[RMDB]
RNA sequence: GGGAACGACUCGAGUAGAGUCGAAAAAACACGUGCGUACGGCCCAGUGGGGGGGAGAGGGACACGCCCUGGGCUCUGCCCAGGGUGCAGCCGGACUGACUGAGCCCCUGUGCCGCCCCCAGAUAAAUUGUAGUUAUACCUUCGGGUAUAACUACAAAAAAGAAACAACAACAACAAC
Reactivity to DMS in 0.01 (KOAc 150mM, MgCl2 10mM, bicine 150mM(pH8.5), 24C), signal-to-noise 2, nucleotides 027 to 126: a050a060c070a070c040g010u010g010c140g010u000a070c030g020g000c010c000c020a150g010u000g040g000g000g000g000g020g000a120g010a090g010g020g020a030c040a300c070g000c000c010c000u010g010g000g010c010u010c140u010g010c020c000c020a000g000g010g020u000g000c030a040g010c030c020g000g000a160c200u020g000a040c020u010g000a170g010c000c010c000c030u030g010u010g010c020c010g000c020c000c000c020c020a060g010a110u000a050a040a110